[RMDB]
RNA sequence: GGGAACGACUCGAGUAGAGUCGAAAACGAUAAUGCAACACAAGCUCAACUUGGAGACUGAUUAACUUUUUGUUUCUAUUGUACAGUUUAUAUUAGUCGUAUGACACACUUCGGUGUGUCAUACGACGGCAUUAUACCACUUCGGUGGUAUAAUGCCAAAAGAAACAACAACAACAAC
Reactivity to DMS in 0.01 (KOAc 150mM, MgCl2 10mM, bicine 150mM(pH8.5), 24C), signal-to-noise 2, nucleotides 027 to 126: c060g000a070u010a070a100u000g000c040a070a070c110a110c140a040a060g010c030u000c080a120a140c050u010u000g000g000a050g000a030c020u010g000a080u000u030a060a090c110u000u000u000u000u010g000u000u000u010c020u010a060u010u000g000u000a070c140a050g000u000u000u000a030u010a080u040u000a170g000u000c010g000u000a000u000g000a000c010a030c000a010c000u010u000c210g020g040u010g010u000g000u000c010a000u000a010c000g000a000c010
Reactivity to 2A3 in 0.01 (KOAc 150mM, MgCl2 10mM, bicine 150mM(pH8.5), 24C), signal-to-noise 4, nucleotides 027 to 126: c010g020a050u110a170a110u290g050c060a100a060c010a030c000a120a060g000c000u030c080a010a160c070u030u050g080g010a040g030a030c040u070g040a150u150u140a070a110c100u050u010u040u120u080g010u000u020u010c010u020a110u080u080g050u060a060c020a100g030u000u130u080a180u050a080u090u170a020g000u000c000g010u010a010u010g020a000c000a000c020a000c020u010u030c130g070g000u000g000u040g010u020c010a000u000a010c010g000a000c000